[RMDB]
RNA sequence: GGGAACGACUCGAGUAGAGUCGAAAAGCAGUCCGACAAGGGUCACUGCGAACACGACAGGGCUGGUAUGUCACCUGGAGUGGAUUAGGACGGACUACUCCGUCAAGGGACAGUAGGACGUCCGAAAGGCAUGCAGCAGCUUCGGCUGUUGCAUGCCAAAAGAAACAACAACAACAAC
Reactivity to DMS in 0.01 (KOAc 150mM, MgCl2 10mM, bicine 150mM(pH8.5), 24C), signal-to-noise 3, nucleotides 027 to 126: g000c000a010g010u000c070c030g000a130c230a020a090g000g030g030u000c110a120c000u000g000c030g050a110a110c050a030c010g000a170c040a020g000g000g010c030u000g000g000u010a010u050g080u020c040a070c000c000u000g000g000a130g000u000g060g030a110u000u000a110g000g000a000c020g000g000a040c020u000a000c010u010c020c040g040u050c300a020a040g020g000g020a050c280a020g010u010a000g000g000a100c000g010u000c000c000g000a020a080a040
Reactivity to 2A3 in 0.01 (KOAc 150mM, MgCl2 10mM, bicine 150mM(pH8.5), 24C), signal-to-noise 3, nucleotides 027 to 126: g010c000a000g000u000c000c010g070a270c190a100a090g010g000g010u050c020a000c010u030g000c010g000a080a020c000a010c000g010a000c000a000g010g030g090c020u180g040g170u210a130u160g090u120c050a030c090c020u000g020g000a010g010u020g030g000a060u020u160a070g000g000a000c000g000g000a000c000u000a000c000u020c020c000g150u230c170a030a020g130g040g010a080c090a030g000u000a000g000g010a000c000g010u000c000c000g000a010a000a000
Source: RMDB library OK1LIB, as collected in RNAgym. Chemical mapping of a 177-nucleotide RNA with DMS and 2A3. For DMS, 4,042 sequencing reads were counted. Conditions: 150 mM KOAc, 10 mM MgCl2 and 150 mM bicine (pH 8.5), 24 C.